[RMDB]
RNA sequence: GGGAACGACUCGAGUAGAGUCGAAAAAAACGGCUUGGGUCAAUGAUGAGAACCUUAUAUUGUCCUGAAGAGAGGUGAUGACUUAAAAAUCAUGCUCAAUAGGAUUACGCUGAGGCCCUUGGUGAACGAUAGGUAUUCUCUUCGGAGAAUACCUAUCAAAAGAAACAACAACAACAAC
Reactivity to 2A3 in 0.01 (KOAc 150mM, MgCl2 10mM, bicine 150mM(pH8.5), 24C), signal-to-noise 2, nucleotides 027 to 126: a000a030a000c040g050g020c030u000u040g010g010g010u000c030a040a100u080g060a040u110g040a100g020a090a040c020c000u130u010a140u010a010u230u130g030u000c000c000u010g100a170a050g090a020g000a000g110g000u020g010a010u000g050a050c130u220u190a130a060a000a000a000u010c030a020u050g100c040u020c010a010a040u030a090g000g000a020u000u070a030c080g020c030u020g030a030g020g020c000c000c060u010u020g080g040u080g040a050a030c030
Reactivity to DMS in 0.01 (KOAc 150mM, MgCl2 10mM, bicine 150mM(pH8.5), 24C), signal-to-noise 3, nucleotides 027 to 126: a080a080a050c100g020g000c030u000u000g000g000g030u000c020a090a080u010g010a090u000g010a110g000a120a070c080c040u000u000a090u010a070u010u010g000u000c000c020u000g020a080a180g010a120g000a020g010g030u010g010a030u000g000a100c170u000u000a020a080a050a080a030u000c000a030u000g000c000u000c010a080a090u000a040g000g000a040u000u000a070c120g010c080u000g000a300g000g010c010c000c020u000u010g010g000u000g000a070a090c210
Record summary:
The record gives the reactivity of an RNA of 177 nucleotides to 2A3 and DMS. The 2A3 profile rests on 1,303 reads. DMS adducts were read by reverse transcription with MarathonRT. Values cover nucleotides 27 to 126. DMS (dimethyl sulfate) methylates the pairing face of unpaired adenines and cytosines.